[RMDB]
RNA sequence: GGGAACGACUCGAGUAGAGUCGAAAAAGUCAGGAAAAAGCGUCUUGGUCGCAGGCCGGGGAACAUCUUAAAAGCAAACUUCUAGCCUGCUGACUCUUGGCAAUGAGUGUUGGAUCCUGGCUAAAGUGCCUUGAAUGCAGCAUGAGGCCAAUCCAUACCCACCCCAUAUGUUCGCAUAUGGGGUGGGAAAAGAAACAACAACAACAAC
Reactivity to 2A3 in 0.01 (KOAc 150mM, MgCl2 10mM, bicine 150mM(pH8.5), 24C), signal-to-noise 1, nucleotides 027 to 156: a000g010u000c030a010g020g000a000a140a050a040a010g070c060g030u000c000u010u050g010g000u000c000g000c000a000g000g000c000c030g000g000g000g050a120a050c030a170u100c110u150u300a290a180a030a000g120c080a040a140a100c010u090u020c010u060a030g000c000c000u020g000c050u070g000a000c010u000c000u080u000g000g000c030a000a130u160g050a090g070u080g010u000u000g000g040a000u020c000c010u000g000g010c000u000a010a050a000g050u050g000c000c000u020u060g140a170a150u170g060c000a010g010c010a050u170g030a010g030g000c000c000a000a010u030c000c000a030u070a210
Structure probing data (2A3) for a 207-nucleotide construct.
It was measured as part of the RMDB library OK3TST.
The reactions ran in a buffer of 150 mM KOAc, 10 mM MgCl2 and 150 mM bicine (pH 8.5), at 24 C.